[RMDB]
Structure probing data (2A3 and DMS) for a 207-nucleotide construct. The 2A3 profile rests on 3,202 reads. The DMS profile rests on 5,592 reads.
RNA sequence: GGGAACGACUCGAGUAGAGUCGAAAAUUUGUCACAUCCAGGGAUUGGCUGAGCUGGGUGUCAUGUCUCUCUCCUUCCUUUCAUCGUUUCCACAGAGGUGGACGUUGGCAAAGACCAGGAGUUCACAGUCAAAUCAAAGGGUGCUGGUGGUCAAGGCAACACUUACUCUGUUCGCAGAGUAAGUGUUAAAAGAAACAACAACAACAAC
Reactivity to 2A3 in 0.01 (KOAc 150mM, MgCl2 10mM, bicine 150mM(pH8.5), 24C), signal-to-noise 2, nucleotides 027 to 156: u120u040u050g060u040c030a020c010a040u020c020c020a010g070g010g030a050u040u090g070g000c010u070g020a070g040c010u040g020g010g010u020g020u050c020a030u080g050u020c010u000c010u010c000u010c070c010u040u090c010c010u070u090u070c030a050u010c010g040u090u130u020c020c000a010c040a030g180a040g090g220u020g010g000a020c010g040u020u030g030g060c100a090a130a050g040a050c020c070a010g020g000a020g040u140u140c100a080c030a060g030u030c030a040a030a120u110c070a070a050a040g060g010g010u030g020c030u050g020g010u030g020g030u020c050a050a040g030g010c030
Reactivity to DMS in 0.01 (KOAc 150mM, MgCl2 10mM, bicine 150mM(pH8.5), 24C), signal-to-noise 2, nucleotides 027 to 156: u010u000u010g020u000c060a120c020a070u000c000c030a080g020g000g010a160u010u010g020g010c030u000g010a190g030c030u010g000g020g050u000g030u010c060a080u010g020u000c000u000c050u000c010u000c000c020u000u000c030c030u010u000u000c050a050u010c020g010u010u000u000c020c010a170c180a160g020a080g010g020u000g000g010a030c030g030u000u000g030g000c080a040a060a090g000a100c060c060a060g020g010a130g010u010u010c030a070c070a110g020u000c040a060a040a110u010c070a020a090a120g000g040g060u000g000c050u000g000g030u000g020g030u000c090a040a070g010g030c050

It was measured as part of the RMDB library OK3TST.